[RMDB]
RNA sequence: GGGAACGACUCGAGUAGAGUCGAAAAUAGCGGUGGGUAGCACCUACGCUGGUCGUCAUGUCCCAGUUGGCGUUGUAGGUGCGCUCCCUUCCUAGCGCCGCGCCCUACUCAUUAGGAACAUUAAUCACACCGUCCAUAGUUUCGACUAUGGACGGUGAAAAGAAACAACAACAACAAC
Reactivity to 2A3 in 0.01 (KOAc 150mM, MgCl2 10mM, bicine 150mM(pH8.5), 24C), signal-to-noise 2, nucleotides 027 to 126: u100a000g000c010g000g000u040g070g010g020u020a040g040c010a030c000c010u010a000c010g060c070u100g140g100u170c010g000u020c030a020u100g130u070c000c030c020a010g120u080u100g030g020c090g030u030u140g010u070a030g000g000u020g000c030g150c010u070c010c010c020u010u000c010c000u010a010g010c020g010c050c000g000c000g030c020c010c000u090a100c030u020c070a150u130u190a020g000g000a030a030c080a120u270u300a110a050u180c090a040
Reactivity to DMS in 0.01 (KOAc 150mM, MgCl2 10mM, bicine 150mM(pH8.5), 24C), signal-to-noise 3, nucleotides 027 to 126: u010a090g050c020g010g010u000g020g030g010u010a210g000c010a110c010c000u010a020c020g000c250u010g010g020u020c030g010u000c040a100u020g000u000c050c050c030a180g000u000u000g010g010c080g000u010u010g030u000a000g010g020u000g010c010g000c120u000c020c050c050u010u000c010c010u000a060g010c300g010c000c020g000c020g020c010c010c000u010a040c070u000c130a090u010u000a040g010g010a070a120c300a130u010u000a070a070u020c150a220
This 177-nucleotide RNA was probed chemically with 2A3 and DMS. For 2A3 the reverse transcriptase was SuperScript II with manganese. Source: RMDB library OK2TST, as collected in RNAgym. For DMS, 2,686 sequencing reads were counted. The RNA was probed in 150 mM KOAc, 10 mM MgCl2 and 150 mM bicine (pH 8.5) at 24 C.